[RMDB]
RNA sequence: GGGAACGACUCGAGUAGAGUCGAAAAGCACGUGCGGAGUGUUGUCGAAUGCUCACUUUUUUUGGCUGAAUCCAUCAGUCGAGGUACAUCAUGUGUCGUUCAUUGUUCGGAUGGAUGGGAUCGGACACUAGCUAUCCAUCUUCGGAUGGAUAGCUAGAAAAGAAACAACAACAACAAC
Reactivity to 2A3 in 0.01 (KOAc 150mM, MgCl2 10mM, bicine 150mM(pH8.5), 24C), signal-to-noise 2, nucleotides 027 to 126: g030c030a000c070g040u070g060c110g000g050a050g020u030g010u080u050g040u030c030g090a150a040u100g030c000u020c070a100c040u050u040u050u010u010u040u090g030g000c000u010g020a060a060u000c040c020a110u030c030a040g050u020c020g050a040g030g040u100a070c040a130u050c040a080u180g020u040g030u090c010g000u010u110c030a100u060u140g050u050u030c060g120g020a060u040g020g050a010u040g030g020g020a040u040c020g020g000a020c010a000
Reactivity to DMS in 0.01 (KOAc 150mM, MgCl2 10mM, bicine 150mM(pH8.5), 24C), signal-to-noise 3, nucleotides 027 to 126: g020c030a060c040g020u000g030c130g020g000a120g010u000g020u010u020g010u020c080g010a090a090u010g020c040u000c040a090c050u000u000u000u000u000u020u000g010g000c010u010g010a060a090u000c090c090a060u000c020a020g010u000c000g000a030g010g010u000a070c150a070u000c110a070u020g000u000g010u010c030g010u000u000c050a100u000u010g000u000u000c050g020g010a100u010g010g020a090u010g010g000g010a110u010c030g000g000a100c130a140
An RNA of 177 nucleotides, treated with 2A3 and DMS and read out base by base. The data come from the RNA Mapping Database (RMDB), library OK2TRN. The RNA was probed in 150 mM KOAc, 10 mM MgCl2 and 150 mM bicine (pH 8.5) at 24 C.